[RMDB]
RNA sequence: GGGAACGACUCGAGUAGAGUCGAAAACUUGCCUUUUUCACCAUCUGUUUUAAUUGGCUUUAUAUUUGGUUUUGAGCACCUUCUUUUGUAUGGAUUAACCUGUAUUGGCUCUUUUGAAUCCUUCAACCACGCCAAGGUGUGAGAUAGAGAGUACCAACCUCGUAUUGCAAUUCGUUGCAAUACGAGGAAAAGAAACAACAACAACAAC
Reactivity to 2A3 in 0.01 (KOAc 150mM, MgCl2 10mM, bicine 150mM(pH8.5), 24C), signal-to-noise 1, nucleotides 027 to 156: c020u020u140g030c020c000u000u070u000u000u040c030a070c090c000a200u120c100u190g150u090u180u000u060a120a130u080u110g000g020c000u130u100u080a120u070a190u050u180u240g090g000u090u020u050u120g020a000g010c000a000c040c000u050u000c050u060u220u040u110g100u040a110u100g000g030a020u050u050a020a170c040c030u030g060u250a170u040u040g050g030c080u090c000u110u010u040u070g040a010a050u000c010c000u030u020c040a050a030c050c020a040c060g100c080c000a070a050g000g000u030g000u010g020a070g010a020u050a090g050a000g000a020g080u000a020c040c010a010a010

Structure probing data (2A3) for a 207-nucleotide construct. It was measured as part of the RMDB library OK3TST. The reactions ran in a buffer of 150 mM KOAc, 10 mM MgCl2 and 150 mM bicine (pH 8.5), at 24 C.